[RMDB]
RNA sequence: GGGAACGACUCGAGUAGAGUCGAAAAAGCCAGCCCCACUGCCUAAAGUUGGUAGCCCAAAAGUACAAGGUGUUGAAAAUAGCAUAGGUGUAUCCCAACUGAGGAUGUCUCGGGGUGACGGCCAUGCUCAUGUACGCUAGUUCGCUAGCGUACAUGAAAAAGAAACAACAACAACAAC
Reactivity to 2A3 in 0.01 (KOAc 150mM, MgCl2 10mM, bicine 150mM(pH8.5), 24C), signal-to-noise 1, nucleotides 027 to 126: a000g010c000c010a030g080c010c030c010c020a070c050u170g030c020c000u170a200a110a000g030u000u020g000g000u070a060g010c050c000c000a080a210a010a000g050u050a050c050a110a060g100g070u050g130u180u090g250a280a050a010a060u190a050g000c050a010u030a040g000g120u050g030u030a010u040c020c020c000a000a030c020u080g010a010g020g060a110u150g080u020c110u140c270g000g040g020g000u070g030a010c050g000g010c000c010a030u100g000c010
Reactivity to DMS in 0.01 (KOAc 150mM, MgCl2 10mM, bicine 150mM(pH8.5), 24C), signal-to-noise 3, nucleotides 027 to 126: a060g000c040c010a290g000c020c000c010c010a130c080u000g000c020c000u000a050a130a060g020u000u000g000g000u000a240g040c070c030c090a060a080a100a100g030u000a050c150a090a100g020g030u000g010u020u000g000a110a070a070a080u000a030g000c010a050u000a050g020g000u010g010u000a080u000c180c000c010a040a040c040u000g000a110g000g000a070u000g010u000c110u000c170g010g010g000g030u010g000a110c200g000g000c010c030a070u010g000c150